[RMDB]
RNA sequence: GGGAACGACUCGAGUAGAGUCGAAAAGGUAAUGGACGACGGCGGCAUGUGGCGAACAGGGAUACCGGUAGUCAGUGUCUGGAACAUCCCAAGGGGCGGCGGAGCUAGCACCCCGACACGUUAAGGCAAAACUUCGCACGGUUCGCCGUGCGAAGAACCUUGAUAGAUUCUUCGGAAUCUAUCAAGGAAAAGAAACAACAACAACAAC
Reactivity to 2A3 in 0.01 (KOAc 150mM, MgCl2 10mM, bicine 150mM(pH8.5), 24C), signal-to-noise 1, nucleotides 027 to 156: g070g020u080a100a150u110g010g050a020c050g010a000c080g010g030c040g050g010c030a030u080g010u070g110g020c040g000a030a080c030a040g040g010g040a020u040a130c050c030g050g010u090a020g120u080c080a070g020u030g050u060c010u090g030g000a010a070c010a080u040c030c040c030a080a080g010g020g000g000c090g010g000c080g110g010a070g020c030u040a020g030c060a020c000c000c000c000g020a040c050a010c040g090u110u050a040a000g020g040c050a010a000a090a120c010u000u000c000g000c000a000c040g000g040u010u000c020g020c120c020g000u000g060c000g000a000a000g000a000a000